[RMDB]
RNA sequence: GGGAACGACUCGAGUAGAGUCGAAAAAGCUGCUGUUGCGCGCGGCGCCCGAGAUCCGGAAGCAGGCCUGGUCCAGCGCCACGUCCCCGGGGACCACGCGCGGGUUCUGGAGCCACCCCAUGGCCUCCAGUAUCAGGCUCUUCGGAGCCUGAUACUGAAAAGAAACAACAACAACAAC
Reactivity to DMS in 0.01 (KOAc 150mM, MgCl2 10mM, bicine 150mM(pH8.5), 24C), signal-to-noise 2, nucleotides 027 to 126: a080g010c040u010g000c010u010g010u010u010g010c020g000c030g000c050g010g020c110g000c030c000c020g010a070g000a100u040c070c000g000g000a140a090g000c080a070g000g000c000c040u000g000g010u000c050c070a070g000c050g000c000c070a170c180g020u000c020c010c010c030g000g010g010g000a090c040c120a060c080g010c070g010c020g010g010g010u020u010c040u000g000g000a040g000c050c050a060c050c050c020c060a050u000g000g000c030c020u010c030
Reactivity to 2A3 in 0.01 (KOAc 150mM, MgCl2 10mM, bicine 150mM(pH8.5), 24C), signal-to-noise 3, nucleotides 027 to 126: a010g010c060u090g000c020u030g040u150u120g020c030g000c010g000c030g040g000c030g040c000c000c010g060a070g010a040u080c030c020g020g030a040a040g050c090a030g060g040c010c010u030g000g010u040c000c020a050g020c030g000c020c020a060c050g060u020c000c000c000c030g060g000g010g030a030c020c010a070c060g020c010g010c040g010g020g010u110u070c040u060g030g010a010g010c020c040a050c030c030c000c010a020u060g030g000c000c010u000c030